[RMDB]
RNA sequence: GGGAACGACUCGAGUAGAGUCGAAAAUUCGCUUGGCGAGUUCCUCGCCCUGGGAGCCAGCCUGGAAGACAUGGGCAUCAAGAUCGGCAAUGACCGGGCCAAGAUUCUGGCCAGGACUCUUGAUGACCCGUCGAGUGGGAUUCGUCCCACUCGACGGAAAAGAAACAACAACAACAAC
Reactivity to 2A3 in 0.01 (KOAc 150mM, MgCl2 10mM, bicine 150mM(pH8.5), 24C), signal-to-noise 1, nucleotides 027 to 126: u150u000c000g000c050u050u040g000g030c050g120a080g020u300u080c050c000u000c050g050c020c000c050u010g030g000g000a000g030c000c000a080g000c000c000u090g000g220a050a000g050a050c150a150u210g010g000g010c000a000u000c000a000a000g000a000u090c010g100g000c080a180a120u180g050a170c010c000g000g000g000c020c020a210a060g150a080u300u000c050u100g000g000c000c050a010g110g070a000c040u000c000u000u000g010a010u030g050a230c000